[RMDB]
RNA sequence: GGGAACGACUCGAGUAGAGUCGAAAACACAGUAACAUUGAAGGAAUUAGUGAACUUAUGGCACCUGGUUAAUUCUCUGCUCACAACCUCAUGUGGUAUCAUCUUUCCCAUGUAUACCCAGUAUUCUCUUAGCUGUGCCCCCUGUGGUCUGUGAUCAGAUUAAAUCAGCUUUCGAGCUGAUUUAAUCAAAAGAAACAACAACAACAAC
Reactivity to DMS in 0.01 (KOAc 150mM, MgCl2 10mM, bicine 150mM(pH8.5), 24C), signal-to-noise 2, nucleotides 027 to 156: c050a050c030a080g020u000a090a090c060a110u000u000g000a110a100g010g000a080a090u000u010a080g060u010g010a080a080c040u000u000a060u020g010g000c020a050c050c020u000g000g020u000u010a020a100u000u000c030u000c030u010g000c020u000c030a070c040a040a090c030c020u000c060a070u000g020u000g000g030u000a040u000c010a060u000c050u010u000u000c040c030c030a160u010g000u000a080u000a050c000c000c010a170g010u000a070u000u000c030u000c030u000u000a120g030c050u010g010u000g010c000c020c000c080c060u000g030u000g020g010u000c050u000g010u000g010a080u000c030a140
Reactivity to 2A3 in 0.01 (KOAc 150mM, MgCl2 10mM, bicine 150mM(pH8.5), 24C), signal-to-noise 2, nucleotides 027 to 156: c050a010c010a020g030u120a070a000c030a130u140u140g130a050a070g030g020a070a090u110u050a110g050u030g120a090a060c030u110u100a060u110g040g020c040a030c050c010u070g070g000u030u070a040a020u160u050c100u000c050u070g060c020u030c010a030c020a060a060c010c010u070c040a080u050g060u100g040g000u030a030u050c020a020u010c050u010u040u030c030c020c000a000u040g040u040a070u020a000c030c010c000a000g020u040a130u110u010c100u000c000u060u100a040g040c060u060g060u050g020c010c010c010c000c020u020g040u030g000g020u000c040u020g090u060g030a030u080c060a040
An RNA of 207 nucleotides, treated with DMS and 2A3 and read out base by base. DMS adducts were read by reverse transcription with MarathonRT. The 2A3 profile rests on 914 reads. 2A3 adducts were read by reverse transcription with SuperScript II with manganese.